[RMDB]
RNA sequence: GGGAACGACUCGAGUAGAGUCGAAAAGGCGACAAGUUCGCUUGUCGCCACGGGGUCCAGCCUGGAAAGGCUGGACGUAUUGGAAUGGUCGGGCCGCCAUUCAACGCGGGACAUUCGUGUCCCGCAAUGAAGGACAAUAUUUCGAUAUUGUCCUUCAAAAAGAAACAACAACAACAAC
Reactivity to 2A3 in 0.01 (KOAc 150mM, MgCl2 10mM, bicine 150mM(pH8.5), 24C), signal-to-noise 4, nucleotides 027 to 126: g000g000c000g000a000c010a010a000g010u030u070c160g060c120u000u000g000u000c000g000c000c000a000c020g020g000g000g000u000c000c000a000g000c000c000u050g110g100a170a100a010g000g000c010u000g000g000a000c000g000u020a080u020u260g140g010a010a000u020g000g020u020c030g010g020g000c010c010g000c000c010a000u020u010c020a030a030c100g000c000g010g000g000a000c010a020u040u050c220g050u030g000u020c000c000c000g000c000a010a000
Reactivity to DMS in 0.01 (KOAc 150mM, MgCl2 10mM, bicine 150mM(pH8.5), 24C), signal-to-noise 6, nucleotides 027 to 126: g010g010c000g010a000c000a010a010g010u010u010c230g020c000u000u000g000u000c000g020c000c000a010c130g010g000g000g000u000c000c010a010g010c000c000u000g000g030a110a160a020g000g010c000u000g010g020a000c000g010u000a020u010u010g010g010a020a000u000g000g000u000c070g000g000g000c030c050g000c010c000a020u000u000c020a130a080c220g010c000g000g000g000a020c000a040u000u010c180g000u000g010u000c000c000c010g010c000a000a020
This 177-nucleotide RNA was probed chemically with 2A3 and DMS. DMS adducts were read by reverse transcription with MarathonRT. Source: RMDB library M2PK50, as collected in RNAgym. The RNA was probed in 150 mM KOAc, 10 mM MgCl2 and 150 mM bicine (pH 8.5) at 24 C.